[RMDB]
RNA sequence: GGGAACGACUCGAGUAGAGUCGAAAAGAGGGUGUUUGUUAACUGGACGACCGUCAAGGACGGCAAUAUCCGUGUGCGCAUCGAUGCGCUGGGUGCUGAUGGCCUUGGUGCGUCAGGGGUGCCUGCGUCUCCAGACUCUUUUCGAAGAGUCUGGAGAAAAAGAAACAACAACAACAAC
Reactivity to 2A3 in 0.01 (KOAc 150mM, MgCl2 10mM, bicine 150mM(pH8.5), 24C), signal-to-noise 2, nucleotides 027 to 126: g110a020g010g030g010u030g060u060u150u160g120u090u150a080a090c050u060g020g030a010c040g020a020c020c020g000u030c020a030a030g080g030a010c020g020g000c010a020a010u040a040u110c040c030g060u130g040u040g040c050g000c030a040u100c150g200a190u170g000c020g020c040u050g000g000g030u010g000c020u050g010a090u110g070g000c000c010u000u050g010g020u050g010c020g020u000c010a010g040g010g000g040u050g030c010c020u070g020c010g040
Reactivity to DMS in 0.01 (KOAc 150mM, MgCl2 10mM, bicine 150mM(pH8.5), 24C), signal-to-noise 2, nucleotides 027 to 126: g030a110g000g010g010u010g000u010u010u000g010u010u000a080a090c070u010g010g020a110c110g010a080c090c050g000u000c050a040a030g010g010a040c010g000g000c040a030a030u000a070u000c010c040g030u000g000u000g020c040g050c010a100u010c300g010a130u020g030c010g040c010u000g020g000g010u010g030c090u000g000a110u000g000g000c010c020u000u000g010g040u000g000c100g020u000c030a070g000g000g020g000u000g010c050c020u000g000c140g000